Record summary: Structure probing data (2A3) for a 207-nucleotide construct. For 2A3, 1,448 sequencing reads were counted. Reactivities are given for positions 27 through 156. Source: RMDB library M2RFPK, as collected in RNAgym. The reactions ran in a buffer of 150 mM KOAc, 10 mM MgCl2 and 150 mM bicine (pH 8.5), at 24 C.

[RMDB]
RNA sequence: GGGAACGACUCGAGUAGAGUCGAAAAUAGCGAAGUAGGAUUUUAUGCGUCAAGUGUUCACAGGCUGGGGAGUCGCCGUGAAACGAAAAACAGAAAGCGUGCUGCUUACGAUAUAAUUUCCGCACCCAUAAGAAGUCUCUGUUCGCAGAGACUUCAAGAGUUGCUAGAAGUUCGCUUCUAGCAACUCAAAAGAAACAACAACAACAAC
Reactivity to 2A3 in 0.01 (KOAc 150mM, MgCl2 10mM, bicine 150mM(pH8.5), 24C), signal-to-noise 2, nucleotides 027 to 156: u120a010g030c020g040a080a010g040u110a080g040g050a040u010u060u040u060a050u100g010c030g040u050c090a030a050g010u080g020u140u050c050a020c030a060g080g040c020u100g030g000g000g030a050g070u060c010g000c030c000g010u030g020a040a050a000c020g050a080a010a020a030a000c080a070g140a060a090a020g060c030g040u040g040c040u040g000c020u050u040a040c020g020a020u000a010u020a150a040u020u020u010c000c000g000c040a030c000c030c000a040u060a100a160g000a000a000g000u000c000u000c000u000g030u040u000c070g030c060a000g000a000g000a000c000u000u000c000a000a000